The data come from the RNA Mapping Database (RMDB), library OK3TST.
An RNA of 207 nucleotides, treated with DMS and 2A3 and read out base by base.
Conditions: 150 mM KOAc, 10 mM MgCl2 and 150 mM bicine (pH 8.5), 24 C.
RNA sequence: GGGAACGACUCGAGUAGAGUCGAAAAUUGUGAUCGGAUAGUAUUCAAGUCAAAGAAAUAUGAAGGUCCGUUUACUACAACUAGUGAAGUCGUCGAUAUGUUAUCUACAUAUUUACCAAAGCAACCAGAAGGUGUUAUUUUGUUCUAUUCAAAGGGAUACACACAUAUGAUUCGUCAUAUGUGUGUAAAAAGAAACAACAACAACAAC
Reactivity to DMS in 0.01 (KOAc 150mM, MgCl2 10mM, bicine 150mM(pH8.5), 24C), signal-to-noise 3, nucleotides 027 to 156: u000u010g020u000g020a060u000c030g040g000a070u000a220g000u000a100u010u010c030a090a210g010u010c130a150a130a220g000a070a070a110u010a030u010g010a090a100g010g010u000c020c010g000u000u000u000a040c020u000a070c100a080a110c040u000a090g010u010g020a070a110g000u000c040g020u010c060g010a050u000a020u000g000u000u000a110u000c140u010a190c020a030u000a030u000u000u010a070c020c030a090a080a120g020c050a060a050c010c020a110g010a100a160g010g030u000g020u000u000a070u000u000u020u000g000u000u000c040u000a140u000u000c090a070a100a070g020g000g030a300
Reactivity to 2A3 in 0.01 (KOAc 150mM, MgCl2 10mM, bicine 150mM(pH8.5), 24C), signal-to-noise 4, nucleotides 027 to 156: u090u060g020u010g020a040u030c010g000g020a040u060a050g060u060a100u050u060c100a130a030g110u080c070a120a120a110g090a050a140a010u170a080u110g060a090a070g080g000u000c010c020g000u030u020u010a030c010u030a030c010a120a020c040u090a050g090u020g160a080a030g050u100c040g010u010c020g040a010u010a010u040g050u030u110a080u120c060u040a010c010a020u040a030u030u050u030a030c030c030a030a120a000g030c010a010a060c020c020a010g070a090a040g050g040u030g030u090u040a060u050u100u010u060g020u040u020c040u040a070u050u090c030a060a040a060g100g040g040a000